[RMDB]
RNA sequence: GGGAACGACUCGAGUAGAGUCGAAAAGAUAUGGAGCGUAAGGCUUUCGAGAAUGUACGCAGAUAACGGAUUCGGAAACGAAUCCGUUGUAGUACACUCGUAUUGGUUACCCAUCGCUCCUAAGUCAUCUCCUAGAAAACUUCGGUUUUCUAGGAGAAAAAGAAACAACAACAACAAC
Reactivity to 2A3 in 0.01 (KOAc 150mM, MgCl2 10mM, bicine 150mM(pH8.5), 24C), signal-to-noise 1, nucleotides 027 to 126: g000a000u060a030u090g000g000a050g000c080g050u060a190a300g030g060c220u300u300u030c000g020a040g140a300a300u170g000u000a040c000g020c300a010g020a190u090a010a050c000g050g000a010u000u060c030g000g000a000a010a030c000g040a000a000u000c060c010g000u000u010g010u030a000g010u000a000c010a030c000u000c000g050u080a100u100u290g270g010u100u300a060c000c000c000a030u110c000g000c000u020c000c000u010a070a000g000u000c050a100
Reactivity to DMS in 0.01 (KOAc 150mM, MgCl2 10mM, bicine 150mM(pH8.5), 24C), signal-to-noise 1, nucleotides 027 to 126: g020a040u000a120u000g000g000a000g020c030g000u010a240a120g010g020c110u020u010u000c010g000a020g010a150a050u000g020u020a000c000g000c270a140g020a050u020a020a010c000g020g000a030u000u000c000g000g020a000a010a040c010g020a010a000u000c000c000g000u000u000g020u020a040g000u000a000c010a030c010u020c000g020u010a120u000u030g000g040u020u000a130c080c020c030a180u000c000g010c000u000c000c000u000a000a060g000u010c020a150